[RMDB]
RNA sequence: GGGAACGACUCGAGUAGAGUCGAAAAGAUAUGGAGUACUGACGCUUUUGACGAAGGGUGGGUCGGAAACGACCCACAUUUCGAUAAGCGUAGUACUCCUAAGUCAAAUCGCGACUUCGGUCGCGAACACUGCGGUGAAGUUCGCUUCACCGCAGUGAAAAGAAACAACAACAACAAC
Reactivity to DMS in 0.01 (KOAc 150mM, MgCl2 10mM, bicine 150mM(pH8.5), 24C), signal-to-noise 1, nucleotides 027 to 126: g000a090u010a300u000g000g010a020g000u000a000c000u010g020a000c010g010c000u000u000u000u010g020a280c280g010a000a010g010g010g050u000g000g000g030u000c000g000g000a070a100a210c000g010a010c000c000c000a000c000a000u000u000u000c000g040a190u000a010a030g000c000g020u000a020g000u000a000c010u000c000c000u000a010a080g010u010c020a070a100a090u000c000g030c000g020a050c000u000u070c200g050g010u000c000g020c010g010a010a170
Reactivity to 2A3 in 0.01 (KOAc 150mM, MgCl2 10mM, bicine 150mM(pH8.5), 24C), signal-to-noise 1, nucleotides 027 to 126: g030a000u090a010u250g010g000a010g000u030a010c040u150g300a070c020g030c000u130u200u130u230g300a250c140g020a000a050g050g060g000u000g000g030g060u000c000g040g040a100a090a100c000g010a000c020c000c020a000c000a000u010u000u000c000g040a050u070a100a000g040c020g030u000a000g000u030a000c000u000c000c030u010a020a000g000u010c000a020a020a150u020c000g030c010g000a000c000u030u120c300g100g010u000c000g000c010g010a010a020

An RNA of 177 nucleotides, treated with DMS and 2A3 and read out base by base. Values cover nucleotides 27 to 126. For 2A3, 1,844 sequencing reads were counted.